[RMDB]
RNA sequence: GGGAACGACUCGAGUAGAGUCGAAAAUAACACUGGCGGCUGCGUAUCACUCUAGGGUACGUGAUAGUGCGAUAUAAGAAGCACUGGUGCAUGCCGGCAGGGACAGUUAAGAGAUGGCCGCAGUCUCAAAAGGGGUCAUUCUUCGGAAUGACCCCAACCGUGAUAUAGGAUUCGUCCUAUAUCACGGAAAAGAAACAACAACAACAAC
Reactivity to DMS in 0.01 (KOAc 150mM, MgCl2 10mM, bicine 150mM(pH8.5), 24C), signal-to-noise 2, nucleotides 027 to 156: u000a140a100c040a030c000u000g010g030c020g000g010c010u010g040c030g040u000a030u010c020a100c120u000c170u000a170g010g030g050u000a020c090g000u010g020a200u010a010g040u000g040c000g010a120u010a110u000a070a190g010a170a260g000c010a020c000u000g010g000u030g020c050a070u000g000c050c030g000g090c050a080g020g020g010a100c030a120g010u000u000a090a200g010a070g000a070u000g000g030c040c040g000c100a300g000u000c030u010c000a080a020a140a200g030g000g020g040u000c020a000u000u000c000u000u000c300g030g020a070a000u000g000a000c000c010c000c000a000a010
Reactivity to 2A3 in 0.01 (KOAc 150mM, MgCl2 10mM, bicine 150mM(pH8.5), 24C), signal-to-noise 3, nucleotides 027 to 156: u070a010a020c040a010c060u050g220g000c000g000g020c010u030g000c010g020u000a000u020c020a040c130u090c080u150a120g100g020g040u080a010c020g010u040g020a020u060a070g010u000g000c020g050a010u060a010u080a300a110g160a140a000g020c010a000c020u040g040g000u100g010c020a030u150g000c010c000g000g010c010a010g000g030g010a040c090a080g010u040u090a100a020g010a000g010a010u040g070g030c030c040g020c080a010g000u000c000u000c010a030a060a030a040g000g000g000g000u000c000a010u000u020c030u020u000c140g070g000a000a000u000g000a000c000c000c000c000a010a010